This 177-nucleotide RNA was probed chemically with 2A3 and DMS.
[RMDB]
RNA sequence: GGGAACGACUCGAGUAGAGUCGAAAAACCAAGGCGAUGGUGGAAGGGCAGAGGGAGGAAUGCAAGCCACGGGAUUCGGAAAUCGAAAUGUAACUUGUUCGCCGAGGCCGCCUGGUGGCUGACAGCCCAAAAUUAGCUCAUUCGUGAGCUAAUUUUGAAAAGAAACAACAACAACAAC
Reactivity to 2A3 in 0.01 (KOAc 150mM, MgCl2 10mM, bicine 150mM(pH8.5), 24C), signal-to-noise 9, nucleotides 027 to 126: a000c020c010a030a010g050g000c040g030a050u070g020g040u040g020g050a090a060g030g010g010c060a030g030a100g050g040g010a030g010g060a060a010u080g030c070a060a000g000c000c010a010c010g010g010g010a030u060u040c020g000g050a060a080a110u140c030g020a030a030a050u210g030u150a060a100c080u110u130g020u110u020c000g000c010c000g000a020g020g010c030c000g030c030c010u100g130g000u020g000g000c010u010g030a020c010a020g030c000c000
Reactivity to DMS in 0.01 (KOAc 150mM, MgCl2 10mM, bicine 150mM(pH8.5), 24C), signal-to-noise 9, nucleotides 027 to 126: a120c030c020a090a080g000g000c060g010a060u010g000g020u010g000g010a110a070g010g000g010c080a070g010a100g010g010g000a090g000g020a080a060u020g010c100a100a050g010c020c010a040c030g000g000g000a120u040u010c030g000g000a070a050a130u040c050g010a010a050a070u030g010u040a090a140c200u030u020g000u010u000c040g010c020c010g010a060g010g010c060c090g000c070c030u020g000g020u000g000g010c010u000g000a130c140a080g000c030c020

The RNA was probed in 150 mM KOAc, 10 mM MgCl2 and 150 mM bicine (pH 8.5) at 24 C.